[RMDB]
RNA sequence: GGGAACGACUCGAGUAGAGUCGAAAACAUCCGAGUGGACGUCCGUCCUCCUUCGGAUGCCCAGGUCGGACCGCGAGGAGGUGGAUAUGCCAUGCCGACCCGAAGAGGAAAGAAGGACGCGAGACGCGACCCAUGCAUUGUUCGCAAUGCAUGGGUCAAAAGAAACAACAACAACAAC
Reactivity to 2A3 in 0.01 (KOAc 150mM, MgCl2 10mM, bicine 150mM(pH8.5), 24C), signal-to-noise 1, nucleotides 027 to 126: c040a030u040c000c000g030a020g090u060g000g010a010c020g070u070c090c080g000u040c030c020u020c000c040u000u010c020g000g020a010u020g010c000c000c000a010g000g040u080c020g010g040a100c000c020g020c050g060a040g060g030a040g050g060u080g020g020a060u060a150u250g090c010c010a020u070g000c000c000g020a020c000c010c000g050a060a050g100a040g100g020a120a000a080g110a010a030g020g000a010c000g020c040g030a040g000a010c070g010c020
Reactivity to DMS in 0.01 (KOAc 150mM, MgCl2 10mM, bicine 150mM(pH8.5), 24C), signal-to-noise 2, nucleotides 027 to 126: c060a050u000c000c000g000a080g000u000g000g000a050c130g000u020c180c050g000u000c010c000u000c020c070u000u000c000g000g010a050u000g020c020c000c010a150g030g030u000c030g000g010a170c090c020g000c140g000a030g010g030a070g010g020u000g020g000a140u000a130u020g010c040c030a050u040g020c090c020g000a050c020c000c030g000a110a040g010a080g000g000a060a090a100g020a080a070g000g020a090c040g000c060g000a100g000a120c140g010c160

An RNA of 177 nucleotides, treated with 2A3 and DMS and read out base by base. It was measured as part of the RMDB library VIROID.